[RMDB]
Source information: Structure probing data (DMS and 2A3) for a 207-nucleotide construct. The DMS profile rests on 6,285 reads. For DMS the reverse transcriptase was MarathonRT. 2A3 adducts were read by reverse transcription with SuperScript II with manganese. Values cover nucleotides 27 to 156. The data come from the RNA Mapping Database (RMDB), library OK3TST. Conditions: 150 mM KOAc, 10 mM MgCl2 and 150 mM bicine (pH 8.5), 24 C.

RNA sequence: GGGAACGACUCGAGUAGAGUCGAAAAUGCAUCUCAGGUGAGAGGCUGGUCCUUUGCAAGUUGGAACACCUUUAUAUAGACACUUCAGAUAGCACUGGGAAUGGUGUCAUCAUGGACUCAAGGGCCACAAAGAAAGGAAUGUGAUGAUGGCACACUAAAUUAUCAUGGGUUUCGACCCAUGAUAAUUAAAAGAAACAACAACAACAAC
Reactivity to DMS in 0.01 (KOAc 150mM, MgCl2 10mM, bicine 150mM(pH8.5), 24C), signal-to-noise 3, nucleotides 027 to 156: u000g020c010a070u010c010u010c010a150g050g020u000g010a140g020a070g010g020c070u000g010g020u010c000c000u000u000u020g010c060a070a150g000u010u000g020g010a080a070c040a080c050c010u000u000u000a110u010a240u000a150g020a110c020a050c060u000u000c060a130g020a110u000a080g020c050a030c050u000g020g010g010a070a120u010g020g000u010g020u000c000a050u000c030a080u000g010g010a090c050u000c070a080a050g010g000g010c010c010a130c070a030a070a120g020a080a090a050g020g000a100a080u010g020u000g020a060u010g020a040u000g030g020c000a040c020a070c050u000a040
Reactivity to 2A3 in 0.01 (KOAc 150mM, MgCl2 10mM, bicine 150mM(pH8.5), 24C), signal-to-noise 3, nucleotides 027 to 156: u070g000c010a010u020c030u000c040a020g020g060u100g050a130g000a000g090g020c080u080g030g030u010c000c020u040u040u060g110c100a140a120g020u080u050g070g050a060a020c020a040c040c030u070u100u010a220u050a060u080a080g070a020c020a020c030u060u110c020a100g010a060u130a080g010c000a010c120u100g030g040g040a090a080u120g080g000u010g050u000c010a000u010c020a010u050g030g040a020c000u030c120a030a080g050g020g010c060c000a060c050a030a160a020g120a030a070a000g050g030a080a080u130g020u000g020a020u010g000a000u000g010g020c000a010c000a000c010u090a030

Annotation
Values are in units of 0.01, from 0 to 300, in steps of 10.